[RMDB]
RNA sequence: GGGAACGACUCGAGUAGAGUCGAAAACAGCAAUUAUUCGUAAUUGCUGAAUGGCGGACCCAGCGCGGAAGGAGCGCGCACGACUCCUUCGCCGCCUUUUAAUAAGCAGGUACUUCGGUACCUGCAAUGCGAAGUAAAAUUUCGAUUUUACUUCGCAAAAAGAAACAACAACAACAAC
Reactivity to 2A3 in 0.01 (KOAc 150mM, MgCl2 10mM, bicine 150mM(pH8.5), 24C), signal-to-noise 5, nucleotides 027 to 126: c000a000g000c000a000a020u020u010a020u080u150c160g050u070a010a010u000u000g000c000u000g000a030a120u180g010g000c020g020g000a050c010c000c010a040g130c220g000c080g180g010a000a000g000g020a010g010c020g030c010g060c090a080c180g240a230c010u000c010c000u010u000c010g000c010c000g000c010c000u060u170u050u060a230a210u170a080a050g000c000a000g000g030u000a010c000u030u090c160g060g000u000a000c010c000u000g000c000a000a000
Reactivity to DMS in 0.01 (KOAc 150mM, MgCl2 10mM, bicine 150mM(pH8.5), 24C), signal-to-noise 5, nucleotides 027 to 126: c000a010g010c000a010a000u000u000a020u000u010c200g020u010a010a020u000u000g010c000u000g020a020a070u000g010g020c000g010g000a170c020c020c030a150g000c220g010c090g020g010a010a020g010g000a020g020c020g020c300g020c180a090c090g000a150c010u000c000c000u000u000c010g010c000c000g010c000c000u000u010u010u010a070a120u020a090a130g000c000a010g000g000u000a000c000u000u000c180g020g000u000a010c000c000u000g010c010a000a020
Chemical mapping of a 177-nucleotide RNA with 2A3 and DMS. Reactivities are rounded to 0.1 and cut off at 0 and 3. For DMS, 5,862 sequencing reads were counted.